[RMDB]
RNA sequence: GGGAACGACUCGAGUAGAGUCGAAAAGAUAUGGAGGCAACUACCCACCAUGGGAGAUCAACAGCAUCCGAAAGUCGGAAACGACUUUCGGAUGACAUGAUUUAACAUGAGGUUGCCUCCUAAGUCAGAAUUAGGUGAUGUUCGCAUCACCUAAUUCAAAAGAAACAACAACAACAAC
Reactivity to 2A3 in 0.01 (KOAc 150mM, MgCl2 10mM, bicine 150mM(pH8.5), 24C), signal-to-noise 1, nucleotides 027 to 126: g130a100u270a210u300g000g000a000g000g060c010a020a000c010u230a280c040c060c030a040c000c000a000u000g010g030g050a060g000a030u000c000a010a270c030a190g060c000a000u000c000c010g000a000a000a000g010u030c000g000g010a000a140a160c020g020a000c070u010u020u000c000g020g000a000u000g010a000c000a060u030g010a000u030u030u000a010a000c000a000u020g010a020g000g010u000u000g000c000c000u010c000c000u010a000a000g050u030c240a020
Reactivity to DMS in 0.01 (KOAc 150mM, MgCl2 10mM, bicine 150mM(pH8.5), 24C), signal-to-noise 1, nucleotides 027 to 126: g000a100u000a200u010g000g000a040g000g000c010a010a000c010u000a140c060c010c000a300c110c010a010u010g000g000g000a040g000a010u000c010a030a080c300a290g000c000a000u000c000c000g020a000a040a000g010u010c000g010g000a080a040a150c000g020a040c000u000u000u000c000g020g000a000u010g010a010c040a190u010g000a030u000u000u000a060a090c000a020u000g010a070g010g000u010u000g000c000c000u000c000c020u000a000a030g000u010c170a110
An RNA of 177 nucleotides, treated with 2A3 and DMS and read out base by base. For 2A3, 2,004 sequencing reads were counted. For DMS, 1,048 sequencing reads were counted. The RNA was probed in 150 mM KOAc, 10 mM MgCl2 and 150 mM bicine (pH 8.5) at 24 C. The data come from the RNA Mapping Database (RMDB), library TTRINS. For DMS the reverse transcriptase was MarathonRT.